[RMDB]
RNA sequence: GGGAACGACUCGAGUAGAGUCGAAAAGAUAUGGACGUUACGCGAGCAUCGAUCUAGCUCGGAAACGAGCUAGGGAGCUCCUGUACGGCGUCCUAAGUCAAAAGAGGUUGACUUCGGUCAACCUCAACAUACAUUGGCAGUUCGCUGCCAAUGUAUGAAAAGAAACAACAACAACAAC
Reactivity to 2A3 in 0.01 (KOAc 150mM, MgCl2 10mM, bicine 150mM(pH8.5), 24C), signal-to-noise 4, nucleotides 027 to 126: g030a020u070a040u150g010g000a000c020g010u070u090a060c130g140c190g030a010g000c020a130u300c040g030a020u000c020u010a000g000c000u000c020g000g000a020a020a020c000g000a010g000c000u000a000g000g000g010a010g010c000u000c000c020u080g110u160a090c250g120g000c000g000u000c000c010u010a090a040g060u030c030a000a050a080a190g000a000g000g000u010u010g000a010c000u070u160c300g010g000u010c000a000a000c010c000u000c010a000a000
Reactivity to DMS in 0.01 (KOAc 150mM, MgCl2 10mM, bicine 150mM(pH8.5), 24C), signal-to-noise 6, nucleotides 027 to 126: g010a050u010a300u010g010g000a010c010g010u000u000a070c060g020c300g000a020g020c010a290u010c210g000a060u010c000u000a010g010c000u000c000g010g000a040a060a170c000g000a010g000c000u000a010g010g000g010a010g000c010u000c010c070u000g020u020a100c300g000g010c020g010u000c000c010u010a030a150g000u010c050a130a080a120a160g000a010g000g000u000u000g000a020c010u010u020c260g020g000u000c000a000a000c000c000u000c000a000a070

An RNA of 177 nucleotides, treated with 2A3 and DMS and read out base by base. For DMS, 6,984 sequencing reads were counted. High 2A3 reactivity points to a flexible backbone, as in loops and unpaired stretches. The 2A3 profile rests on 11,427 reads. Reactivities are given for positions 27 through 126. Source: RMDB library TTRDES, as collected in RNAgym.